RNA sequence: GGGAACGACUCGAGUAGAGUCGAAAAUGAGCGAUUUAUCGGCCCGGAGAUAGAAUCAUACGUUGAGCAAAUCCCACUGGGUGACGCACUCCGAAGCCGCAUGGACGCGGUGUUUCUCCUCAAAGACGAAGUUGACGAAGAGCGAGACGGCGAAAUCGAUUUGGUAAACUUUCGAGUUUACCAAAUCAAAAGAAACAACAACAACAAC
Reactivity to DMS in 0.01 (KOAc 150mM, MgCl2 10mM, bicine 150mM(pH8.5), 24C), signal-to-noise 2, nucleotides 027 to 156: u000g000a120g020c010g020a140u010u000u000a110u000c000g030g030c020c030c010g000g020a150g020a090u010a080g000a120a130u000c070a120u000a110c030g020u000u000g020a090g030c040a060a140a120u000c000c000c030a110c070u000g010g030g070u010g000a120c020g000c040a150c020u000c000c020g010a140a230g010c000c000g040c120a090u000g010g010a130c070g000c020g000g040u000g000u000u000u000c000u000c030c000u000c040a030a080a120g030a180c060g000a050a060g010u000u000g010a150c070g000a110a030g000a080g080c080g000a090g000a070c020g010g000c050g000a020a100a130u010c080
Reactivity to 2A3 in 0.01 (KOAc 150mM, MgCl2 10mM, bicine 150mM(pH8.5), 24C), signal-to-noise 4, nucleotides 027 to 156: u180g010a040g030c050g060a090u000u050u090a080u100c010g020g000c000c020c020g010g010a020g000a020u150a050g160a110a110u130c050a060u110a170c200g090u100u130g030a040g040c020a060a080a130u050c020c020c030a200c240u180g010g040g000u010g010a010c080g010c010a030c010u000c010c010g040a080a000g010c010c000g030c060a030u070g040g030a010c030g010c020g040g020u060g010u020u060u000c030u000c010c000u070c070a110a090a020g030a030c070g080a080a030g050u070u090g020a030c060g040a080a050g010a000g020c030g010a010g000a030c030g030g040c030g070a010a010a110u160c070
An RNA of 207 nucleotides, treated with DMS and 2A3 and read out base by base. Reactivities are given for positions 27 through 156. For 2A3, 2,206 sequencing reads were counted. For DMS, 4,680 sequencing reads were counted. The reactions ran in a buffer of 150 mM KOAc, 10 mM MgCl2 and 150 mM bicine (pH 8.5), at 24 C. It was measured as part of the RMDB library OK3TST.